The record gives the reactivity of an RNA of 177 nucleotides to 2A3 and DMS.
RNA sequence: GGGAACGACUCGAGUAGAGUCGAAAAGAUAUGGAUAGCGAAGAACGGAUAUUCUAUGAAGUCGGAAACGAUGGAGAAUUUCCGGGAGCUAUCCUAAGUCAAAGUGCUAGACUUCGGUCUAGCACAACUCGAUAUAGUAGUUCGCUACUAUAUCGAGAAAAGAAACAACAACAACAAC
Reactivity to 2A3 in 0.01 (KOAc 150mM, MgCl2 10mM, bicine 150mM(pH8.5), 24C), signal-to-noise 6, nucleotides 027 to 126: g020a010u070a030u140g000g000a010u000a000g000c030g250a300a020g030a200a040c000g000g000a000u000a020u060u000c040u030a300u280g030a030a010g000u010c000g020g000a040a040a040c010g000a000u030g010g030a010g000a020a010u050u050u010c000c000g000g000g010a010g000c000u000a000u000c000c000u000a070a000g040u020c060a130a040a100g000u000g010c000u000a000g000a010c000u040u090c300g070g000u000c000u000a000g000c000a000c000a000a000
Reactivity to DMS in 0.01 (KOAc 150mM, MgCl2 10mM, bicine 150mM(pH8.5), 24C), signal-to-noise 6, nucleotides 027 to 126: g010a040u000a300u010g000g000a010u000a000g010c000g010a120a140g010a150a220c020g000g010a010u000a010u010u000c000u000a240u010g010a120a230g000u000c000g000g000a130a090a170c020g010a010u000g000g010a010g010a020a010u000u000u000c000c000g010g000g000a110g000c000u000a000u000c000c000u000a010a070g000u000c040a100a090a100g010u000g000c000u000a000g000a010c000u000u010c210g010g000u000c000u010a000g000c000a000c000a010a050
For 2A3, 20,216 sequencing reads were counted.
For 2A3 the reverse transcriptase was SuperScript II with manganese.
The data come from the RNA Mapping Database (RMDB), library TTRDEL.
The reactions ran in a buffer of 150 mM KOAc, 10 mM MgCl2 and 150 mM bicine (pH 8.5), at 24 C.